About this RNA:
This 177-nucleotide RNA was probed chemically with 2A3 and DMS. Values are in units of 0.01, from 0 to 300, in steps of 10. DMS adducts were read by reverse transcription with MarathonRT. The reactions ran in a buffer of 150 mM KOAc, 10 mM MgCl2 and 150 mM bicine (pH 8.5), at 24 C.
[RMDB]
RNA sequence: GGGAACGACUCGAGUAGAGUCGAAAAACUGCGAUACUACGGUAUCGCAGAACUGAUCCGUGUAAUGGGCCUCCGCCCGUGCAGGCGAGCCCGGCCGGCCCCGUGCCGGCAUGCACAACGAUCAGAACUAAAAGGCAGAGUUCGCUCUGCCUUUUAGAAAAGAAACAACAACAACAAC
Reactivity to 2A3 in 0.01 (KOAc 150mM, MgCl2 10mM, bicine 150mM(pH8.5), 24C), signal-to-noise 3, nucleotides 027 to 126: a010c000u000g000c000g000a000u000a000c010u010a010c170g070g010u000a000u000c000g030c000a000g000a000a000c000u010g000a000u020c000c070g000u020g000u020a170a290u300g000g010g000c020c010u180c110c050g020c020c000c060g010u170g100c230a060g020g000c000g010a000g000c000c000c000g010g000c010c000g000g000c000c000c000c080g120u200g000c000c000g030g000c020a020u020g000c010a000c020a060a080c050g000a000u010c010a020g020a060a010
Reactivity to DMS in 0.01 (KOAc 150mM, MgCl2 10mM, bicine 150mM(pH8.5), 24C), signal-to-noise 4, nucleotides 027 to 126: a150c000u000g000c000g000a000u000a000c010u020a100c240g020g010u000a010u000c020g000c000a010g010a040a070c010u000g010a010u000c000c230g010u010g010u000a060a130u040g000g010g010c020c060u030c070c040g000c000c010c080g010u020g020c180a160g010g000c010g010a140g000c020c000c020g030g060c000c000g020g000c020c000c270c300g030u020g020c000c050g010g030c020a070u030g000c010a000c020a100a100c270g000a000u000c020a010g000a100a200